[RMDB]
RNA sequence: GGGAACGACUCGAGUAGAGUCGAAAACAUGUUGAUGAGAAGGAUAUUGAUGCUUCCAGUAGUGAAGGUAUCACGCCUCUGUUAGUGCAACAUGAAAUUGAAUGUAGAGCUAAGAUGCAAGAGAGAAUCCAGAAAGUUAUACUUCAUGGAAGCUCCCUCACCCACUAUGGUUCGCCAUAGUGGGUGAAAAAGAAACAACAACAACAAC
Reactivity to 2A3 in 0.01 (KOAc 150mM, MgCl2 10mM, bicine 150mM(pH8.5), 24C), signal-to-noise 2, nucleotides 027 to 156: c030a000u010g000u010u020g070a200u030g030a030g040a210a100g040g050a070u080a060u270u070g040a040u060g020c000u020u040c020c030a110g010u080a010g010u160g110a020a010g050g000u050a000u010c040a010c070g020c000c010u000c000u000g050u100u180a100g040u120g110c030a040a030c020a000u090g120a080a060a130u180u130g080a040a040u040g030u090a030g020a000g120c010u040a010a040g000a080u120g010c020a110a000g030a040g010a000g000a120a000u050c040c030a040g130a020a130a000g000u020u020a060u030a150c000u000u030c010a050u040g000g040a040a040g000c000u010c000c000c000
Reactivity to DMS in 0.01 (KOAc 150mM, MgCl2 10mM, bicine 150mM(pH8.5), 24C), signal-to-noise 2, nucleotides 027 to 156: c010a090u000g000u000u010g000a100u000g010a120g030a030a020g010g010a100u020a100u000u000g020a020u000g030c010u000u010c000c020a170g010u000a200g020u000g040a010a020g020g020u000a010u000c020a070c120g010c020c000u010c010u000g030u020u000a080g030u010g000c020a080a010c000a030u010g010a060a080a190u000u020g010a130a060u000g030u010a080g010a080g010c030u000a100a100g030a130u010g010c100a070a060g000a120g010a210g000a080a300u000c020c000a050g000a070a100a120g020u000u020a170u000a280c020u010u000c030a220u000g010g000a130a160g030c050u000c000c000c010
Structure probing data (2A3 and DMS) for a 207-nucleotide construct. For DMS the reverse transcriptase was MarathonRT. The RNA was probed in 150 mM KOAc, 10 mM MgCl2 and 150 mM bicine (pH 8.5) at 24 C. It was measured as part of the RMDB library OK3TST. 2A3 adducts were read by reverse transcription with SuperScript II with manganese. For DMS, 2,498 sequencing reads were counted.